[RMDB]
RNA sequence: GGGAACGACUCGAGUAGAGUCGAAAAAUGCAGGAGCACCUGGCCUCCCUUGCUGCACAAGGAGACGCUGCAGACACACUUAUAAUCUUGGAGCAUCCAUCAACGUAUACAGUGGGCAAGCGGGGCAAGCAGUAUUUAAUUUCGAUUAAAUACUGCUAAAAGAAACAACAACAACAAC
Reactivity to 2A3 in 0.01 (KOAc 150mM, MgCl2 10mM, bicine 150mM(pH8.5), 24C), signal-to-noise 9, nucleotides 027 to 126: a010u110g010c030a020g050g150a110g050c040a050c070c020u030g090g000c010c010u030c010c010c000u000u020g000c020u180g110c000a020c020a060a090g060g000a060g040a030c070g020c030u120g050c040a000g020a020c030a000c010a010c100u220u150a100u090a300a090u080c040u060u130g040g010a010g010c010a020u000c020c010a050u090c050a050a090c040g010u020a040u050a190c060a050g000u030g010g020g000c010a010a000g010c010g020g000g000g010c010a000
Reactivity to DMS in 0.01 (KOAc 150mM, MgCl2 10mM, bicine 150mM(pH8.5), 24C), signal-to-noise 9, nucleotides 027 to 126: a120u010g010c030a070g010g010a150g030c090a090c030c030u000g020g010c010c010u000c020c070c010u000u000g010c020u010g020c020a070c030a100a110g000g010a090g000a070c110g010c030u000g000c080a050g000a090c110a090c150a090c160u000u010a090u010a100a100u000c050u010u000g020g010a070g030c070a090u000c020c020a090u010c100a050a070c170g010u010a080u010a080c120a090g020u000g000g000g010c020a040a030g010c300g020g000g000g010c080a080